[RMDB]
RNA sequence: GGGAACGACUCGAGUAGAGUCGAAAAACAGUCAGUACGCUGACUGAGGGAAACGGGAGCCGGGCUUGGGACAAGAGCCAUCCCACGUCCAAGGCCAAGUAGGCUCUAGUGAUGGUACGCCAUCACAAAAACUGGUCUACCUUCGGGUAGACCAGAACUAUUAAUAUGACUUCGGUCAUAUUAAUAGAAAAGAAACAACAACAACAAC
Reactivity to DMS in 0.01 (KOAc 150mM, MgCl2 10mM, bicine 150mM(pH8.5), 24C), signal-to-noise 2, nucleotides 027 to 156: a060c060a020g010u000c020a030g040u000a060c280g050c050u000g010a050c020u010g020a070g010g040g010a090a050a070c030g010g000g010a110g040c020c000g020g010g000c010u000u010g010g010g010a050c040a070a100g010a080g020c060c030a300u000c010c000c020a100c100g000u000c010c010a090a070g000g000c030c020a040a090g000u000a130g030g000c000u000c030u000a180g000u000g000a040u000g000g050u000a120c300g060c020c000a040u000c000a040c010a020a040a060a130a050c020u000g000g000u000c000u000a030c000c000u000u000c300g030g040g040u000a030g000a000c000c000a000g020a020a090
Reactivity to 2A3 in 0.01 (KOAc 150mM, MgCl2 10mM, bicine 150mM(pH8.5), 24C), signal-to-noise 6, nucleotides 027 to 156: a000c000a000g000u010c000a000g010u060a050c210g020c130u000g010a000c010u010g010a080g030g040g020a080a160a130c150g060g040g050a040g030c040c050g020g010g000c010u010u000g020g000g000a010c030a090a040g010a010g020c010c000a020u010c000c000c000a000c020g010u000c020c020a140a100g030g000c050c030a110a040g070u130a100g090g000c000u000c010u020a050g000u000g000a000u000g000g020u030a030c250g040c020c000a000u010c010a000c020a000a060a000a000a010c000u000g000g000u000c000u000a000c000c010u030u070c210g060g000g000u000a000g000a000c000c000a000g000a000a000